[RMDB]
RNA sequence: GGGAACGACUCGAGUAGAGUCGAAAACUUUUCAACUUCGGUUGAAAAGAACCUGCCCGCUGCUCGCAGUUAAGUCUAACUCCUCCUCUGAGUCAUCGGGCGUUAUAUAAUCAUUCGUGAUUAUAAAAUAUAAACCUUUGUUCGCAAAGGUUUAUAUAAAAGAAACAACAACAACAAC
Reactivity to DMS in 0.01 (KOAc 150mM, MgCl2 10mM, bicine 150mM(pH8.5), 24C), signal-to-noise 2, nucleotides 027 to 126: c010u000u000u000u000c000a000a000c000u000u010c200g020g000u010u000g000a010a000a010a020g000a130a140c000c010u000g020c010c020c010g010c120u000g000c050u000c020g020c190a050g000u000u000a070a100g000u000c130u000a100a110c110u010c100c040u000c120c030u010c070u010g010a030g010u010c030a050u000c000g000g000g010c020g030u010u000a060u000a020u010a010a000u000c000a050u000u020c090g010u000g000a000u000u010a010u000a030a050a080
Chemical mapping of a 177-nucleotide RNA with DMS. DMS adducts were read by reverse transcription with MarathonRT. The RNA was probed in 150 mM KOAc, 10 mM MgCl2 and 150 mM bicine (pH 8.5) at 24 C. Values cover nucleotides 27 to 126.